[RMDB]
Chemical mapping of a 177-nucleotide RNA with DMS and 2A3. The RNA was probed in 150 mM KOAc, 10 mM MgCl2 and 150 mM bicine (pH 8.5) at 24 C. The data come from the RNA Mapping Database (RMDB), libraries RFM100 and RFMREP.
RNA sequence: GGGAACGACUCGAGUAGAGUCGAAAAGGUCAUCUGGUGGGCUCUAGAAUUCAUCAUUAUGCACACCAAAGUAAAGAUUGUGUGCUCGAAACUUGGAUUCAAUUACUUUUUCGUCAAAACAUACCAACAUGGCACUAUGAUUCGUCAUAGUGCCAUGAAAAGAAACAACAACAACAAC
Reactivity to DMS in 0.01 (KOAc 150mM, MgCl2 10mM, bicine 150mM(pH8.5), 24C), signal-to-noise 4, nucleotides 027 to 126: g020g010u020c080a050u020c040u010g000g020u000g020g000g000c060u020c130u000a090g000a070a050u000u000c020a050u010c090a150u030u000a110u010g000c000a000c010a000c020c130a060a030a100g000u010a090a110a150g010a090u000u020g020u000g000u000g010c010u010c300g000a030a060a100c140u000u000g010g010a040u000u000c030a040a120u020u000a060c080u010u010u000u030u000c020g000u020c110a090a050a050a090c110a070u020a090c080c060a080a180
Reactivity to 2A3 in 0.01 (KOAc 150mM, MgCl2 10mM, bicine 150mM(pH8.5), 24C), signal-to-noise 4, nucleotides 027 to 126: g020g010u060c010a080u010c030u050g090g020u060g030g020g000c020u040c020u050a040g050a020a020u030u040c010a010u010c000a010u060u150a100u300g010c000a000c000a000c030c070a100a040a000g160u180a060a020a030g100a090u080u080g020u010g000u020g000c000u010c050g090a060a060a030c070u030u030g010g000a010u030u040c020a020a100u130u060a130c060u090u080u010u000u070c050g110u080c020a030a060a060a030c030a030u160a120c010c020a010a020